The record gives the reactivity of an RNA of 207 nucleotides to 2A3. The data come from the RNA Mapping Database (RMDB), library OK3TST. Conditions: 150 mM KOAc, 10 mM MgCl2 and 150 mM bicine (pH 8.5), 24 C.

[RMDB]
RNA sequence: GGGAACGACUCGAGUAGAGUCGAAAAUCUUGAGAUUGUAGGAUCAUCACUCUCCAGAAGAGGGAGAGUAGGCAUCAGGUGGUUACUCAACAUGACCCCUGCCAUAAGGGCUUGUGAAUGGCAGGCUCAGGACCUGGACAGAUGUCUGGCUGACUCAAGUCAUACGAGGAUUCGUCCUCGUAUGACUAAAAGAAACAACAACAACAAC
Reactivity to 2A3 in 0.01 (KOAc 150mM, MgCl2 10mM, bicine 150mM(pH8.5), 24C), signal-to-noise 1, nucleotides 027 to 156: u100c020u010u070g010a030g040a110u080u160g020u190a040g020g000a090u150c020a020u020c000a090c000u000c000u000c020c000a020g060a200a080g050a230g000g010g000a000g000a010g000u020a030g000g030c030a060u030c080a070g100g000u020g100g010u050u030a090c040u030c090a060a140c020a110u140g000a090c000c000c010c020u050g010c030c030a050u050a020a140g020g040g040c060u080u060g040u020g180a130a000u010g060g000c010a030g000g000c040u040c080a040g050g000a010c000c070u040g010g010a020c020a060g020a070u010g010u000c010u030g100g000c040u030g010a030c080u040c150a090